Chemical mapping of a 177-nucleotide RNA with DMS and 2A3. It was measured as part of the RMDB library OK1LIB.
[RMDB]
RNA sequence: GGGAACGACUCGAGUAGAGUCGAAAAGAAGAGCAGGCAGAUAAUCUUGUGCAGUAUGCAUGCUCGUAACUCCACACGAAGCAAGGCAGCAAAAGAAUAACUGCCACUGCACAAGUGGAGCCGCAGAAAUGGAGUACUCAUUCGUGAGUACUCCAUUAAAAGAAACAACAACAACAAC
Reactivity to DMS in 0.01 (KOAc 150mM, MgCl2 10mM, bicine 150mM(pH8.5), 24C), signal-to-noise 6, nucleotides 027 to 126: g000a160a110g000a140g000c000a090g030g000c000a060g020a190u040a150a100u020c000u000u010g000u010g000c020a020g020u000a080u040g020c240a120u010g000c020u000c000g000u010a080a060c080u030c070c110a100c170a030c020g000a050a060g010c010a070a070g000g020c010a010g000c160a090a070a120a130g010a160a060u030a080a190c010u000g010c000c010a110c010u010g000c000a000c010a010a020g000u020g000g010a110g000c020c020g020c030a130g010a080
Reactivity to 2A3 in 0.01 (KOAc 150mM, MgCl2 10mM, bicine 150mM(pH8.5), 24C), signal-to-noise 5, nucleotides 027 to 126: g140a030a010g030a020g030c100a090g030g000c020a010g050a210u140a130a100u120c000u010u010g000u020g000c000a000g010u080a020u180g070c080a040u040g000c010u000c000g000u010a020a050c070u010c050c030a060c010a000c060g020a090a000g010c010a010a020g030g000c000a000g000c040a020a090a050a070g200a090a090u180a110a040c000u010g020c000c000a000c000u000g000c000a000c000a020a000g010u020g010g040a000g010c010c000g000c020a010g050a030